[RMDB]
RNA sequence: GGGAACGACUCGAGUAGAGUCGAAAAGGAAUAAAUUAUUGGUUGUGCAAACCAAAUAGAAUCAUGACUUUGAGUUGCACCAAGUCUGAAACCAAGCGGAUGUAUUUUUUGUCCCAUAACCCCUCACCUAUAGGAGCCUUUUCGAAGGCUCCUAUAGAAAAGAAACAACAACAACAAC
Reactivity to DMS in 0.01 (KOAc 150mM, MgCl2 10mM, bicine 150mM(pH8.5), 24C), signal-to-noise 3, nucleotides 027 to 126: g000g000a040a050u000a030a090a050u010u020a110u000u000g010g000u000u000g020u020g000c100a070a050a040c020c000a010a030a060u030a070g020a100a100u030c180a060u010g010a110c110u000u010u010g000a120g000u010u020g010c020a040c010c080a060a070g010u000c030u020g010a070a040a060c030c030a020a060g030c130g010g000a040u010g010u000a010u000u000u000u000u020u000g010u000c000c000c000a120u030a060a150c010c000c000c000u010c040a070c130
Reactivity to 2A3 in 0.01 (KOAc 150mM, MgCl2 10mM, bicine 150mM(pH8.5), 24C), signal-to-noise 3, nucleotides 027 to 126: g080g020a040a010u170a070a170a050u110u070a060u080u030g030g000u010u120g060u090g210c170a020a080a060c000c000a100a010a000u070a000g090a020a030u140c050a090u130g070a030c040u010u050u100g060a080g070u070u060g060c010a010c000c040a010a070g050u000c050u060g050a030a020a020c010c010a000a070g060c070g060g070a030u050g050u140a180u040u100u000u010u050u190g060u070c030c010c000a020u150a130a060c000c000c000c020u000c020a050c000
Overview: The record gives the reactivity of an RNA of 177 nucleotides to DMS and 2A3. For DMS the reverse transcriptase was MarathonRT. Values cover nucleotides 27 to 126. For 2A3, 1,058 sequencing reads were counted.